Background
Chemical mapping of a 177-nucleotide RNA with 2A3 and DMS. Values are in units of 0.01, from 0 to 300, in steps of 10. 2A3 adducts were read by reverse transcription with SuperScript II with manganese.

RNA sequence: GGGAACGACUCGAGUAGAGUCGAAAAGAACUUUGACUACUCCUAAACAAAGUAGUAACAAUUUUCAUUUCGUUUCCGGUUUCUUAGAUCGAAUAUUAUUCUGAGGAAAUUCCCUGAUUACAUAUCACCGUAUAUAGGUGUUCGCACCUAUAUACGGAAAAGAAACAACAACAACAAC
Reactivity to 2A3 in 0.01 (KOAc 150mM, MgCl2 10mM, bicine 150mM(pH8.5), 24C), signal-to-noise 9, nucleotides 027 to 126: g020a020a000c010u030u010u010g020a010c000u000a000c000u010c010c010u060a060a020a020c030a020a070a000g000u010a000g010u070a040a070c020a020a020u020u020u020u040c040a070u030u050u070c030g030u020u020u030c020c000g020g020u030u050u030c070u040u100a110g020a140u080c050g050a120a090u090a090u230u050a040u050u070c040u110g030a100g030g040a060a090a110u070u060c010c000c000u020g050a090u050u170a070c080a090u180a040u070c030a020
Reactivity to DMS in 0.01 (KOAc 150mM, MgCl2 10mM, bicine 150mM(pH8.5), 24C), signal-to-noise 3, nucleotides 027 to 126: g010a020a030c050u010u000u000g030a160c000u000a020c010u000c010c020u000a120a050a230c300a120a170a000g000u000a000g000u010a100a070c020a010a030u010u010u000u000c010a100u000u010u000c020g000u000u010u020c030c000g000g020u000u010u000c160u030u020a110g010a090u010c050g000a070a030u020a050u030u000a030u010u000c010u020g000a030g000g000a050a100a260u030u000c010c000c000u000g010a070u000u010a080c140a040u020a050u000c050a170